An RNA of 207 nucleotides, treated with DMS and 2A3 and read out base by base. The reactions ran in a buffer of 150 mM KOAc, 10 mM MgCl2 and 150 mM bicine (pH 8.5), at 24 C. DMS adducts were read by reverse transcription with MarathonRT. For DMS, 5,594 sequencing reads were counted. Values are in units of 0.01, from 0 to 300, in steps of 10.
RNA sequence: GGGAACGACUCGAGUAGAGUCGAAAAAUGGACACGCAUAUGGACACAUAUGGACACACAUAUGGACACGUGUGGAUAUGUGUGCGUACACGUCGCUGGGACACAUGCCUGCCACUCGGGGCCCAGCUGCCCUCUGUGUUUGUCCUUGCCACAGUCAGCCUACAUAAUCUUUCGAGAUUAUGUAGGCAAAAGAAACAACAACAACAAC
Reactivity to DMS in 0.01 (KOAc 150mM, MgCl2 10mM, bicine 150mM(pH8.5), 24C), signal-to-noise 2, nucleotides 027 to 156: a060u030g020g010a060c030a030c060g000c010a060u000a030u020g010g010a190c060a020c020a060u000a010u000g000g010a300c040a030c020a060c100a100u000a150u000g020g010a210c140a070c110g000u000g000u000g000g000a180u010a010u000g020u000g020u000g010c000g010u000a060c000a050c000g000u000c130g000c010u010g010g020g010a050c000a020c070a010u010g010c020c030u000g000c070c080a110c040u000c030g020g000g000g010c010c020c020a090g000c020u000g010c010c000c030u000c040u010g000u020g000u000u000u000g010u000c000c060u000u010g000c010c020a070c070a090g000u020c090a230
Reactivity to 2A3 in 0.01 (KOAc 150mM, MgCl2 10mM, bicine 150mM(pH8.5), 24C), signal-to-noise 6, nucleotides 027 to 156: a010u120g000g000a000c000a010c030g040c030a010u030a070u280g020g020a000c000a000c010a010u020a000u040g220g050a040c020a000c000a000c010a030u170a110u250g230g040a090c100a040c170g000u030g000u010g040g020a000u020a010u010g010u010g000u020g010c000g040u180a070c240a030c120g030u020c010g000c010u010g000g000g050a020c020a000c010a180u230g060c010c010u050g060c070c030a090c060u110c080g000g000g010g000c000c000c000a010g010c020u030g000c000c000c000u010c020u010g000u000g000u000u010u010g010u000c000c000u010u050g010c010c000a080c020a030g260u300c100a020